Structure probing data (DMS and 2A3) for a 177-nucleotide construct. The RNA was probed in 150 mM KOAc, 10 mM MgCl2 and 150 mM bicine (pH 8.5) at 24 C.

RNA sequence: GGGAACGACUCGAGUAGAGUCGAAAACUGGGGCACAGAGUUGCAGUUGAUUGAAACUAAAUCAUGUGCGCUAAGUUGUCCCGAAAUCAUCGUUUCGGAUUAUAAGAAGGCAGUGUUACUCCUCUAGGUAAACCAAUCCGUUCGCGGAUUGGUUUACAAAAGAAACAACAACAACAAC
Reactivity to DMS in 0.01 (KOAc 150mM, MgCl2 10mM, bicine 150mM(pH8.5), 24C), signal-to-noise 2, nucleotides 027 to 126: c020u000g000g010g010g070c010a000c020a060g010a170g020u000u000g020c300a010g000u000u000g000a240u050u010g000a040a090a010c080u000a070a050a080u000c150a190u000g000u000g000c000g010c030u000a070a030g010u000u030g050u000c000c000c010g040a110a050a080u060c090a040u030c070g000u000u000u000c050g020g040a150u020u000a080u000a130a080g010a060a040g000g000c050a050g030u000g040u010u000a140c020u000c050c000u000c040u000a210g020
Reactivity to 2A3 in 0.01 (KOAc 150mM, MgCl2 10mM, bicine 150mM(pH8.5), 24C), signal-to-noise 3, nucleotides 027 to 126: c020u020g000g000g040g020c030a010c000a000g120a030g170u120u240g050c050a040g050u020u020g070a300u000u130g030a080a000a010c040u050a090a000a000u020c020a070u040g040u000g060c080g030c060u000a060a060g010u090u000g000u000c000c010c000g000a030a050a040u080c080a000u090c060g040u000u000u100c030g000g000a090u130u060a040u120a290a090g150a100a060g040g000c140a000g010u050g070u140u010a090c000u010c000c000u000c100u080a040g030
The 2A3 profile rests on 939 reads. DMS adducts were read by reverse transcription with MarathonRT.